[RMDB]
RNA sequence: GGGAACGACUCGAGUAGAGUCGAAAAGCUUUGACGUGCUUGCCGUCGACGGUGAGGAUUCCGAAUCCCUGCUGCCAGUUCCCCGUCGCCAACUGCAGGUACUUAGCCUGCUUCUGGUCCAUCAUGUGGCCGACCUCGAACCCGGUAACCGUCUGCACUUUCUGAUAAAAUUCGUUUUAUCAGAAAGAAAAGAAACAACAACAACAAC
Reactivity to DMS in 0.01 (KOAc 150mM, MgCl2 10mM, bicine 150mM(pH8.5), 24C), signal-to-noise 3, nucleotides 027 to 156: g010c070u000u010u010g020a110c020g060u000g020c000u000u000g020c020c010g030u000c030g020a040c020g020g040u000g000a070g000g010a060u000u010c110c110g010a130a170u000c010c000c010u010g010c020u000g000c010c010a160g000u000u000c010c010c000c050g020u000c050g020c010c010a020a090c070u000g020c010a010g010g040u000a090c190u000u000a230g020c000c010u000g080c010u000u000c050u000g020g020u000c030c030a090u010c120a090u000g020u000g020g030c020c040g000a030c060c010u000c000g000a070a080c040c080c030g020g000u000a080a050c030c030g010u000c010u000g010c080a240
Reactivity to 2A3 in 0.01 (KOAc 150mM, MgCl2 10mM, bicine 150mM(pH8.5), 24C), signal-to-noise 6, nucleotides 027 to 156: g020c040u110u100u160g030a040c030g060u110g040c060u050u020g000c020c000g050u060c040g010a050c030g030g020u080g050a120g030g040a050u130u050c100c060g020a030a050u050c010c020c030u040g020c020u040g010c020c030a040g000u030u030c000c010c000c020g030u050c020g000c020c050a080a060c080u070g000c000a000g000g020u050a150c050u080u140a040g040c000c010u000g010c000u040u030c080u060g010g000u010c030c010a140u180c040a080u200g040u110g080g000c030c010g030a060c010c020u040c020g060a090a080c020c040c030g010g000u020a030a030c020c010g020u020c040u020g010c020a020